[RMDB]
RNA sequence: GGGAACGACUCGAGUAGAGUCGAAAAACACGAUGUGUCGUUGACGGGAUACAGAUUAAUUUCCACAUCGAUAUAGUUAAAGGUAUUACUGGGUACGGGUUCGCAUUUAUCUACGGAAGAGACGGUGUGAGAAUAUGUUCCGAGACCACACGGAGAAUCCUCGUUAGUGUUUCGACACUAACGAGGAAAAAGAAACAACAACAACAAC
Reactivity to DMS in 0.01 (KOAc 150mM, MgCl2 10mM, bicine 150mM(pH8.5), 24C), signal-to-noise 2, nucleotides 027 to 156: a070c070a090c050g020a220u020g060u000g030u000c090g040u000u010g040a240c060g000g030g040a070u000a300c070a140g010a100u010u010a140a110u010u000u000c040c020a060c020a050u000c020g000a110u000a120u020a060g000u000u000a000a080a040g020g030u000a080u000u000a120c070u010g000g020g020u000a010c030g020g010g010u010u000c020g050c010a080u020u010u010a060u010c020u000a100c070g000g000a060a090g000a170g000a100c010g010g030u000g000u000g010a080g000a030a020u000a210u000g000u000u020c010c000g000a300g000a070c020c010a040c020a020c020g020g010a220g000a080a040
Reactivity to 2A3 in 0.01 (KOAc 150mM, MgCl2 10mM, bicine 150mM(pH8.5), 24C), signal-to-noise 5, nucleotides 027 to 156: a000c050a010c030g040a100u090g000u020g010u050c030g010u020u040g110a150c030g010g020g020a040u070a080c050a040g080a040u090u190a100a060u060u090u000c010c000a000c000a000u000c010g060a040u060a020u040a150g070u060u150a060a030a020g050g000u030a030u150u050a100c090u070g050g000g010u030a040c040g030g020g010u000u040c050g000c010a010u040u040u040a050u040c050u060a050c060g030g040a040a010g030a030g020a030c010g000g020u020g000u010g010a200g010a030a030u110a050u120g040u030u010c000c010g000a010g000a000c010c010a010c000a000c020g000g020a040g020a050a050
An RNA of 207 nucleotides, treated with DMS and 2A3 and read out base by base. Source: RMDB library OK3TST, as collected in RNAgym. Conditions: 150 mM KOAc, 10 mM MgCl2 and 150 mM bicine (pH 8.5), 24 C. Values cover nucleotides 27 to 156.